[RMDB]
RNA sequence: GGGAACGACUCGAGUAGAGUCGAAAAUUGUGCUCGAAGAAUGGAUGAACGAUUAUGUUCUAAAUCUAUCAAAAGUUAGCACAUGGGGUUCACUAUUUCACGCCGAGUCUUUAAAGCGAGGUGAUAGUCACUCCAGGGAUUUCGAUCCCUGGAGUGAAAAAGAAACAACAACAACAAC
Reactivity to DMS in 0.01 (KOAc 150mM, MgCl2 10mM, bicine 150mM(pH8.5), 24C), signal-to-noise 1, nucleotides 027 to 126: u000u000g010u000g000c070u000c050g030a190a020g000a000a000u040g000g000a120u030g000a070a020c040g000a190u040u110a040u060g010u010u000c010u020a150a120a020u040c000u010a140u000c080a210a030a060a010g000u050u020a000g000c000a000c000a000u020g000g000g080g040u000u010c000a120c070u000a050u040u000u000c070a150c050g120c000c000g000a300g000u030c000u000u060u080a070a040a230g000c010g010a220g000g010u000g050a120u020a040g000
Reactivity to 2A3 in 0.01 (KOAc 150mM, MgCl2 10mM, bicine 150mM(pH8.5), 24C), signal-to-noise 1, nucleotides 027 to 126: u030u100g000u000g130c000u000c010g030a020a010g030a000a110u020g000g000a050u060g000a010a000c000g060a140u130u130a110u300g000u050u000c000u000a050a060a060u000c000u060a050u030c010a000a250a000a030g140u090u080a000g000c100a000c000a000u000g000g090g000g000u030u030c000a000c110u040a100u000u300u300c010a020c000g000c030c000g080a090g080u080c080u190u180u260a110a090a000g010c000g050a000g010g000u000g090a100u030a070g000
Source: RMDB library OK1LIB, as collected in RNAgym. The record gives the reactivity of an RNA of 177 nucleotides to DMS and 2A3. Values cover nucleotides 27 to 126. 2A3 adducts were read by reverse transcription with SuperScript II with manganese. DMS adducts were read by reverse transcription with MarathonRT.